[RMDB]
RNA sequence: GGGAACGACUCGAGUAGAGUCGAAAAAUGGAGCUUUACUGCAGGCUGUCGCUGAGACGUGGUCGCCGAUGUGCAGCAUAGGUAGGAGACACUACACAGGUACCCGCGCUAGCGGGCCACCGAGUCAACAGUGAAAUACUACCCGUCGGUGACUGCGCACUUAUUCCCAGUUCGCUGGGAAUAAGUGAAAAGAAACAACAACAACAAC
Reactivity to DMS in 0.01 (KOAc 150mM, MgCl2 10mM, bicine 150mM(pH8.5), 24C), signal-to-noise 2, nucleotides 027 to 156: a150u000g000g030a110g020c040u000u000u010a050c060u000g020c020a130g030g020c010u000g040u010c020g000c040u000g000a110g000a130c030g050u010g020g020u010c010g050c010c010g040a020u000g030u000g040c020a090g000c070a150u010a070g020g030u000a070g020g000a290g040a180c020a110c060u010a050c070a090c020a090g000g000u000a040c010c000c020g000c010g040c150u010a120g040c020g010g020g020c000c020a010c000c020g000a150g050u000c060a050a150c110a090g040u000g000a060a100a120u000a130c020u000a000c010c000c020g040u000c010g030g030u000g010a110c050u000g000c010g010
Reactivity to 2A3 in 0.01 (KOAc 150mM, MgCl2 10mM, bicine 150mM(pH8.5), 24C), signal-to-noise 4, nucleotides 027 to 156: a000u120g030g010a050g030c050u070u080u160a100c060u110g070c050a040g030g010c030u060g050u140c050g020c100u090g070a040g010a080c000g000u010g000g000u000c000g000c000c000g000a000u000g010u010g010c020a000g010c030a010u010a010g010g000u000a000g000g060a260g000a070c000a000c020u110a000c030a000c010a000g000g000u000a000c000c000c000g000c000g010c010u070a000g000c010g010g000g000c000c000a000c000c000g010a010g010u020c010a000a010c000a010g000u000g010a010a010a000u010a010c000u000a000c000c000c000g000u000c000g000g000u010g000a000c000u000g000c010g000